[RMDB]
RNA sequence: GGGAACGACUCGAGUAGAGUCGAAAAUCGGGGAGCGGUGACGGUGCUCCAGCGGGUUCGAAUAAGGGAAUCGAAGAAGAGGGAGGUCUUGGCGGGGGCAGUUCAGAAAGCAUGACAACUCUCGUGGAGUGAUGGUUAAAUUCGUUUAACCAUCACUAAAAGAAACAACAACAACAAC
Reactivity to 2A3 in 0.01 (KOAc 150mM, MgCl2 10mM, bicine 150mM(pH8.5), 24C), signal-to-noise 3, nucleotides 027 to 126: u080c010g010g000g000g020a020g050c040g000g040u080g050a030c040g030g070u050g020c010u010c030c000a010g030c010g020g000g000u040u050c050g040a090a050u130a100a090g090g000g000a020a100u100c070g010a060a040g030a060a010g020a080g010g020g010a030g030g000u020c040u080u070g040g000c030g000g020g000g020g020c030a020g030u020u030c020a010g060a070a040a020g010c040a020u070g010a020c000a010a090c040u010c000u020c040g020u050g070g050
Reactivity to DMS in 0.01 (KOAc 150mM, MgCl2 10mM, bicine 150mM(pH8.5), 24C), signal-to-noise 6, nucleotides 027 to 126: u010c050g010g000g010g000a080g010c060g030g010u010g020a090c110g020g030u000g000c030u000c020c030a080g010c070g010g010g010u000u000c050g000a090a090u020a120a110g010g010g020a110a090u000c060g010a080a090g000a090a080g010a100g000g000g010a090g000g020u010c060u010u010g010g010c070g000g000g000g000g020c090a040g000u000u010c060a080g000a070a090a080g000c070a050u000g000a070c080a050a060c060u000c040u000c030g020u010g010g010